[RMDB]
RNA sequence: GGGAACGACUCGAGUAGAGUCGAAAAGAUGCUGAAACUCCCUGAAGCAGUUCGUAAUUCGUAUGACAUGUCCAGCCUUAGGCGAGUGAUCCACGCGGCCGCUCCAUGUCCAGUCCAGAUCAAGGAGCCAGAUUAGCGAUUUCGAUCGCUAAUCUGGAAAAGAAACAACAACAACAAC
Reactivity to DMS in 0.01 (KOAc 150mM, MgCl2 10mM, bicine 150mM(pH8.5), 24C), signal-to-noise 1, nucleotides 027 to 126: g000a100u030g030c000u000g020a140a070a120c060u000c060c000c000u020g020a110a060g000c010a140g020u010u000c040g010u020a020a110u030u030c020g010u010a090u030g000a040c180a080u080g020u000c000c090a190g000c010c040u040u000a030g050g000c080g000a010g020u040g000a190u010c090c080a000c050g000c030g020g020c060c020g000c000u000c020c000a120u000g000u000c020c050a090g000u000c000c030a050g000a110u020c020a080a100g000g010a010g000
Reactivity to 2A3 in 0.01 (KOAc 150mM, MgCl2 10mM, bicine 150mM(pH8.5), 24C), signal-to-noise 2, nucleotides 027 to 126: g040a000u120g000c020u040g030a120a060a060c000u000c000c000c000u030g060a040a000g020c080a040g050u080u150c010g020u070a030a120u170u050c040g020u170a100u300g090a040c020a090u210g030u000c010c030a040g000c040c000u030u060a050g040g050c040g050a010g000u050g020a130u010c000c040a060c000g070c040g030g000c020c000g000c000u000c000c000a080u090g010u000c010c000a000g020u030c030c000a000g000a060u030c030a140a050g000g000a010g080

The record gives the reactivity of an RNA of 177 nucleotides to DMS and 2A3. For 2A3, 1,124 sequencing reads were counted. The reactions ran in a buffer of 150 mM KOAc, 10 mM MgCl2 and 150 mM bicine (pH 8.5), at 24 C.